[RMDB]
RNA sequence: GGGAACGACUCGAGUAGAGUCGAAAAGAGAUUUCCGUUCUAAGAUUAACUGGGAAACUUCAGUGGAGCAAUCCAGCAGAGAUCCAGUUGCCGUGGGUAUGGCGGUGGGAUCGCAACCAAGUGGUAUAUGUUAUGGAAGAUAUUUACGAUCACGAUUUAAUUCAGUACAGUUCGCUGUACUGAAUUAAAAAGAAACAACAACAACAAC
Reactivity to 2A3 in 0.01 (KOAc 150mM, MgCl2 10mM, bicine 150mM(pH8.5), 24C), signal-to-noise 5, nucleotides 027 to 156: g050a010g020a040u030u030u030c020c010g020u100u050c050u100a140a080g010a210u190u060a040a050c040u050g030g010g020a090a090a120c010u110u090c030a070g040u040g020g000a010g000c020a030a060u030c020c010a030g010c050a020g040a000g000a100u000c000c010a000g020u040u030g010c010c010g030u040g040g060g020u080a080u120g050g010c010g000g030u060g000g030g010a020u030c030g000c040a020a080c030c020a070a060g050u040g070g020u030a080u000a020u110g080u140u030a040u050g040g030a040a020g060a050u050a070u090u190u090a090c060g030a060u070c050a010c080g000a000u040u010
Reactivity to DMS in 0.01 (KOAc 150mM, MgCl2 10mM, bicine 150mM(pH8.5), 24C), signal-to-noise 2, nucleotides 027 to 156: g000a140g070a180u000u000u000c020c050g030u010u000c060u000a120a140g010a120u000u000a040a100c010u010g000g000g000a080a110a040c020u000u000c100a150g010u000g000g010a040g010c060a110a200u000c040c010a050g000c040a130g000a110g010a050u000c010c010a110g000u000u000g010c020c050g010u000g030g030g070u000a090u000g010g000c080g000g010u000g010g030g010a040u010c020g000c020a060a080c030c030a030a230g020u010g020g000u000a060u000a070u010g030u010u000a140u000g020g010a060a050g010a080u000a050u000u010u000a060c070g020a090u000c030a070c050g000a250u000u000